[RMDB]
RNA sequence: GGGAACGACUCGAGUAGAGUCGAAAAGGAGGAGGUCUGCCCAAUUUCCCUUAUAUCCCUAACACGGCAGACUUCGAAGGGCCUGAGAAAGGGAAAUUGGUGUUAGGGAUAUGUCUCAAACCUCAGACUACACCAUUCUAUUCGUAGAAUGGUGUAGAAAAGAAACAACAACAACAAC
Reactivity to 2A3 in 0.01 (KOAc 150mM, MgCl2 10mM, bicine 150mM(pH8.5), 24C), signal-to-noise 3, nucleotides 027 to 126: g040g010a010g030g010a010g000g010u000c000u010g000c010c000c000a010a050u030u020u000c000c010c000u040u070a110u010a010u020c010c000c000u000a000a000c000a010c010g000g000c010a000g010a010c000u040u020c010g040a070a070g110g060g040c010c010u020g020a020g090a070a040a010g040g020g040a020a040a020u090u140g130g000u000g010u000u010a000g010g000g000a000u010a020u010g020u000c020u000c030a060a050a000c010c020u030c030a000g010a020
Reactivity to DMS in 0.01 (KOAc 150mM, MgCl2 10mM, bicine 150mM(pH8.5), 24C), signal-to-noise 5, nucleotides 027 to 126: g000g010a260g010g000a060g000g010u000c010u000g030c020c010c180a060a170u010u000u010c000c010c010u010u000a070u010a050u000c000c000c000u000a020a030c020a050c050g010g010c010a020g010a040c010u000u000c040g010a090a120g000g000g010c010c010u000g000a090g010a060a120a080g000g000g010a020a070a070u000u000g010g020u000g010u000u010a000g000g000g000a020u000a020u010g000u010c060u000c060a060a060a080c100c060u000c030a110g010a300